[RMDB]
RNA sequence: GGGAACGACUCGAGUAGAGUCGAAAACGGAGGGAGAAGGUGAAAUUACGAAGGAAAGAAAGAGAUGAGAAAUCAAGAAUGAAGCAAGACAUUGAUUGAUAUGGUUGUUUUCGGUGCAUGUUUGAUUAAUUAGUAUUAGGUUCGCCUAAUACUAAUUAAAAGAAACAACAACAACAAC
Reactivity to DMS in 0.01 (KOAc 150mM, MgCl2 10mM, bicine 150mM(pH8.5), 24C), signal-to-noise 9, nucleotides 027 to 126: c120g000g010a070g000g010g010a050g010a060a070g010g020u000g010a050a060a070u010u010a070c170g010a060a050g000g010a040a050a050g000a050a060a070g000a060g000a090u010g010a080g000a050a040a040u000c040a030a040g000a070a070u010g000a050a040g010c090a040a060g010a090c040a030u000u000g000a090u010u010g000a040u010a070u010g010g010u000u000g000u000u000u000u000c090g010g010u000g010c090a080u010g010u000u000u010g000a240u010u000
Reactivity to 2A3 in 0.01 (KOAc 150mM, MgCl2 10mM, bicine 150mM(pH8.5), 24C), signal-to-noise 7, nucleotides 027 to 126: c040g030g030a030g020g020g020a060g020a050a040g060g020u060g060a050a060a050u130u070a050c060g030a010a010g040g020a050a050a020g050a020a070a010g070a010g010a010u090g020a010g040a060a060a010u060c030a020a020g030a030a040u110g010a030a010g010c030a030a020g020a040c010a030u030u080g070a110u050u040g040a030u070a050u170g120g000u000u010g000u010u040u040u060c050g030g030u030g040c050a070u100g030u030u030u020g060a060u010u010